[RMDB]
Conditions: 150 mM KOAc, 10 mM MgCl2 and 150 mM bicine (pH 8.5), 24 C. This 207-nucleotide RNA was probed chemically with 2A3 and DMS. For 2A3 the reverse transcriptase was SuperScript II with manganese.
RNA sequence: GGGAACGACUCGAGUAGAGUCGAAAACCGCGCAUCGCAAGUUCGUGCUUGCGACUUACACGUAGGGCGAGGGGUGGGCGAAAGUUGCCAUGAGACCGUAACUUUCGUAGUCAUUGAUAAAGGGGCACAUGCCCUGACUAGUUCGCUAGUCAGGGAACCUACAGUUGAAGUUCGCUUCAACUGUAGGAAAAGAAACAACAACAACAAC
Reactivity to 2A3 in 0.01 (KOAc 150mM, MgCl2 10mM, bicine 150mM(pH8.5), 24C), signal-to-noise 7, nucleotides 027 to 156: c010c010g020c060g040c030a050u010c000g000c000a010a010g030u160u250c130g170u300g100c000u000u000g010c010g010a000c010u040u110a060c100a030c070g090u120a060g010g000g060c080g050a110g010g010g010g030u200g000g010g030c020g000a000a000a000g010u010u020g000c020c020a080u130g090a050g030a190c050c010g000u010a010a000c000u010u010u000c020g000u020a030g020u060c090a100u040u190g030a040u150a110a110a040g000g000g010g030c060a010c010a180u190g020c010c000c000u000g000a000c000u000a000g010u010u010c060g010c120u000a000g000u000c000a000g000g000g000a000a010
Reactivity to DMS in 0.01 (KOAc 150mM, MgCl2 10mM, bicine 150mM(pH8.5), 24C), signal-to-noise 1, nucleotides 027 to 156: c070c040g000c030g020c070a130u000c000g040c000a000a030g040u000u000c240g020u000g020c000u000u000g000c000g020a010c080u000u000a080c070a040c050g030u000a130g010g000g000c050g000a060g000g010g020g040u000g040g010g010c000g030a030a020a040g000u000u000g010c010c030a140u000g010a220g000a150c080c160g040u000a050a010c000u000u000u000c000g040u000a080g000u000c040a090u000u000g000a110u000a080a080a070g000g000g010g000c030a120c080a050u000g000c000c000c000u000g030a020c010u000a000g020u000u000c300g030c000u000a000g020u000c010a010g000g000g010a000a030
Reactivities are given for positions 27 through 156.
It was measured as part of the RMDB library M2RFPK.